Chemical mapping of a 177-nucleotide RNA with 2A3 and DMS. Source: RMDB library OK2TRN, as collected in RNAgym. For DMS the reverse transcriptase was MarathonRT. The RNA was probed in 150 mM KOAc, 10 mM MgCl2 and 150 mM bicine (pH 8.5) at 24 C. 2A3 adducts were read by reverse transcription with SuperScript II with manganese.

RNA sequence: GGGAACGACUCGAGUAGAGUCGAAAAGAGCCCCGGGAUGUGGUGCAGCUGGCUCUCCACCGCAUGCGAGUUAUAGGUCGGCAACGCGGAACGGUCGGAAAAGUGGUCCUCGGCGCGAACGAUGGUGUACCAAUACGAUGUUCGCAUCGUAUUGGUAAAAAGAAACAACAACAACAAC
Reactivity to 2A3 in 0.01 (KOAc 150mM, MgCl2 10mM, bicine 150mM(pH8.5), 24C), signal-to-noise 2, nucleotides 027 to 126: g060a000g140c030c010c010c020g000g030g010a070u030g070u070g050g030u040g020c020a000g010c040u120g040g020c010u000c010u040c040c000a030c000c020g060c020a010u080g040c020g000a080g020u070u110a230u100a200g120g000u040c040g010g060c010a080a040c050g010c010g030g020a030a030c020g020g030u060c030g040g030a020a120a020a050g110u080g010g000u040c000c010u020c030g040g000c010g000c020g020a060a010c010g040a060u090g060g090u090g030
Reactivity to DMS in 0.01 (KOAc 150mM, MgCl2 10mM, bicine 150mM(pH8.5), 24C), signal-to-noise 5, nucleotides 027 to 126: g000a220g000c070c010c020c070g010g000g010a050u010g020u000g010g020u000g000c140a060g030c080u010g000g020c070u010c020u010c090c030a090c020c020g010c030a070u010g010c050g020a120g020u000u000a100u010a090g000g030u000c020g000g010c040a050a080c080g020c030g010g010a080a110c100g010g010u010c050g020g010a040a060a080a120g020u010g010g010u000c030c020u010c060g000g000c060g000c060g000a040a070c070g010a090u010g000g010u000g000